[RMDB]
RNA sequence: GGGAACGACUCGAGUAGAGUCGAAAAGUACGCCGCAAUAAGCAGUCCGGCAAAGGCCACCGCACGGUCACCGGCCCUGGUGGCGAUCCACCCGCCCGUCACUGCCCCGAUCGGUAGGGCGAUAAGGGUGUCAUACCGUUUUCGAACGGUAUGACACAAAAGAAACAACAACAACAAC
Reactivity to DMS in 0.01 (KOAc 150mM, MgCl2 10mM, bicine 150mM(pH8.5), 24C), signal-to-noise 2, nucleotides 027 to 126: g000u010a110c080g020c050c000g040c130a100a110u010a100a160g020c100a120g000u000c060c000g010g000c100a080a040a100g000g000c000c010a040c040c090g000c230a080c120g020g000u000c010a150c040c030g040g010c030c030c030u000g010g010u000g000g030c030g040a030u000c100c050a040c070c000c040g000c130c080c040g010u010c030a090c050u000g020c020c020c000c130g010a090u020c110g000g010u010a060g010g000g010c040g030a040u000a090a110g010g000
Reactivity to 2A3 in 0.01 (KOAc 150mM, MgCl2 10mM, bicine 150mM(pH8.5), 24C), signal-to-noise 2, nucleotides 027 to 126: g040u050a040c040g000c000c000g000c060a040a200u240a200a010g070c040a040g050u030c050c020g000g040c070a060a040a130g140g000c000c000a050c000c080g120c050a090c050g010g010u070c020a110c170c130g050g000c040c030c000u080g070g000u000g000g000c000g050a040u060c040c010a020c010c010c010g020c010c030c000g020u010c030a050c300u040g040c000c010c020c050g100a150u110c020g000g030u100a060g030g000g030c020g010a030u100a060a140g180g020